[RMDB]
RNA sequence: GGGAACGACUCGAGUAGAGUCGAAAAUCGGGAUGGAGUCGUAGGGAGAUUGUACCUAAAUCCUAAACGGUGGGUCGGCGUAAACGCGAUAAACUUUAGCAGUUUCAUGAAAAAGCUGAAACCAGCAUACAGCGUGGAGUUACUGAGUUCGGGAGCGUGGACACAGAUAUUUCGAUAUCUGUGUCCAAAAAGAAACAACAACAACAAC
Reactivity to DMS in 0.01 (KOAc 150mM, MgCl2 10mM, bicine 150mM(pH8.5), 24C), signal-to-noise 2, nucleotides 027 to 156: u000c010g020g000g010a100u010g000g020a060g060u000c010g020u000a100g010g020g000a070g010a120u000u020g030u010a060c020c040u000a070a080a120u000c030c000u000a050a070a130c060g020g040u000g010g010g030u000c010g000g000c070g040u000a050a070a120c070g000c020g020a170u000a080a080a110c030u000u000u000a120g040c020a130g010u000u000u000c020a070u000g000a110a140a070a130a140g020c070u010g000a000a060a080c070c020a070g060c000a230u000a100c070a050g000c040g030u000g010g010a050g000u000u000a040c060u010g000a050g010u000u000c030g030g010g020a080g020c070g110
Reactivity to 2A3 in 0.01 (KOAc 150mM, MgCl2 10mM, bicine 150mM(pH8.5), 24C), signal-to-noise 2, nucleotides 027 to 156: u080c040g020g010g020a030u080g030g020a030g000u040c040g050u150a040g020g070g000a050g000a060u110u120g080u090a050c000c000u050a120a040a060u060c040c020u030a110a010a060c050g000g020u070g000g000g020u030c040g000g020c020g030u060a150a050a010c030g010c000g030a050u110a140a110a080c030u160u170u140a100g010c020a000g000u030u030u000c010a030u030g110a040a100a100a010a040g030c040u010g020a080a010a020c020c020a030g040c030a010u040a140c050a050g030c010g060u020g000g000a030g010u000u020a030c040u020g020a040g050u040u050c050g010g040g020a070g040c060g000